[RMDB]
The record gives the reactivity of an RNA of 207 nucleotides to 2A3 and DMS. Source: RMDB library ARCHII, as collected in RNAgym. The RNA was probed in 150 mM KOAc, 10 mM MgCl2 and 150 mM bicine (pH 8.5) at 24 C. The DMS profile rests on 4,288 reads.
RNA sequence: GGGAACGACUCGAGUAGAGUCGAAAAGCGGAUGUCGAAGCAGGGGAAGCGUGUCGAGGAAGCGGCCAUGAUCUCGUAAACCACAGGCCGAAAACAAUAAUCGCCAACACCAAGCGCGAUUCCUCCUCGUUCGCCCUCGCUGCCUAAUUAGCAGCUACAUAGCGAUUUUGUUCGCAAAAUCGCUAUGAAAAGAAACAACAACAACAAC
Reactivity to 2A3 in 0.01 (KOAc 150mM, MgCl2 10mM, bicine 150mM(pH8.5), 24C), signal-to-noise 7, nucleotides 027 to 156: g040c030g020g060a080u080g040u170c070g070a060a020g050c050a040g030g010g000g010a040a080g010c010g010u040g070u130c010g010a000g010g010a060a020g040c000g000g020c000c010a080u080g050a100u040c050u040c150g160u240a080a080a090c050c020a030c050a090g000g000c020c010g010a030a050a000a010c080a010a070u140a120a000u020c010g020c020c030a090a050c080a070c130c050a110a030g030c040g000c000g130a000u030u010c010c010u010c010c000u000c000g000u020u010c010g020c000c000c020u030c060g030c000u010g000c000c000u060a090a070u050u110a010g010c010a000g000c000u010a020
Reactivity to DMS in 0.01 (KOAc 150mM, MgCl2 10mM, bicine 150mM(pH8.5), 24C), signal-to-noise 2, nucleotides 027 to 156: g000c020g000g020a060u000g040u010c060g000a110a060g020c050a090g010g000g050g010a090a060g030c010g030u010g030u000c080g000a030g010g000a110a100g010c000g030g040c000c010a100u010g010a020u010c040u010c300g000u010a090a020a050c000c020a020c050a180g020g010c000c010g000a050a020a010a170c140a040a090u000a020a080u000c010g030c000c010a110a130c130a280c120c140a060a160g030c080g020c010g030a050u010u000c010c000u000c040c010u010c020g010u000u000c050g000c000c020c020u010c070g010c010u010g000c000c010u000a100a110u000u010a040g010c010a020g000c000u000a180